[RMDB]
RNA sequence: GGGAACGACUCGAGUAGAGUCGAAAAGGAGGCACUUAGUCUUCUAGUGUUUGAAUGUGGAUGGAAUUAAAGCUGGGUUUGUAGUGAGCCAUUAGGAUUAUGGCAAAUGUCUAGUGUACAGAAUUCACAGAAGAUGUUGAUUCGUCAACAUCUUCUGAAAAGAAACAACAACAACAAC
Reactivity to 2A3 in 0.01 (KOAc 150mM, MgCl2 10mM, bicine 150mM(pH8.5), 24C), signal-to-noise 6, nucleotides 027 to 126: g020g000a010g020g030c010a010c090u130u110a030g010u020c010u050u040c010u040a030g010u020g050u060u080u120g140a160a090u070g020u070g050g080a050u050g010g070a060a100u120u100a240a100a010g010c050u020g010g000g050u040u060u060g100u060a140g020u040g080a000g010c000c000a010u050u100a040g110g060a080u150u090a040u150g020g000c000a000a020a050u060g010u010c020u030a020g030u020g030u080a050c040a020g090a060a170u050u050c050a020
Reactivity to DMS in 0.01 (KOAc 150mM, MgCl2 10mM, bicine 150mM(pH8.5), 24C), signal-to-noise 8, nucleotides 027 to 126: g010g010a040g020g010c020a110c190u030u010a090g020u000c040u000u000c030u000a080g020u000g010u010u010u000g010a080a060u010g010u010g000g010a090u010g000g010a110a080u010u010a050a080a150g010c030u010g010g000g010u010u000u010g020u010a070g010u000g000a140g010c000c020a040u000u020a080g010g020a080u030u010a030u010g010g000c020a030a060a050u010g000u000c040u010a060g020u010g010u020a080c120a080g000a060a080u010u010c080a190
This 177-nucleotide RNA was probed chemically with 2A3 and DMS. The data come from the RNA Mapping Database (RMDB), libraries RFM100 and RFMREP. The RNA was probed in 150 mM KOAc, 10 mM MgCl2 and 150 mM bicine (pH 8.5) at 24 C. Reactivities are given for positions 27 through 126. For DMS the reverse transcriptase was MarathonRT.